[RMDB]
An RNA of 207 nucleotides, treated with 2A3 and read out base by base. 2A3 adducts were read by reverse transcription with SuperScript II with manganese. Source: RMDB library M2RFPK, as collected in RNAgym.
RNA sequence: GGGAACGACUCGAGUAGAGUCGAAAAGUAAAGAUCGCUCUUUUACUCGGCAUGAUACCACCGUUAUCGGCUCAACAGAGUAGUUGCAAAUGACAACAAUGCUCAGGGUUAUGCUCUCGCUGCCUAAAAAAUCGUUUAACGUUCGCGUUAAACGAAAGUAGUACUGCUGCUUCGGCAGCAGUACUACAAAAGAAACAACAACAACAAC
Reactivity to 2A3 in 0.01 (KOAc 150mM, MgCl2 10mM, bicine 150mM(pH8.5), 24C), signal-to-noise 2, nucleotides 027 to 156: g100u080a000a090a120g030a100u130c040g020c080u050c030u060u040u010u050a000c000u010c020g020g010c040a040u110g010a030u060a160c020c030a030c040c000g070u030u070a030u220c030g030g000c000u010c010a030a100c050a050g000a000g030u090a040g000u010u000g040c080a110a180a180u210g060a110c010a020a000c030a100a150u100g000c020u040c040a030g000g000g020u030u080a060u150g030c000u000c000u000c060g030c070u020g070c030c040u180a110a120a000a000a000a000u020c000g000u000u000u000a000a000c000g010u000u020c210g000c000g120u010u000a000a000a000c000g000a000a000a000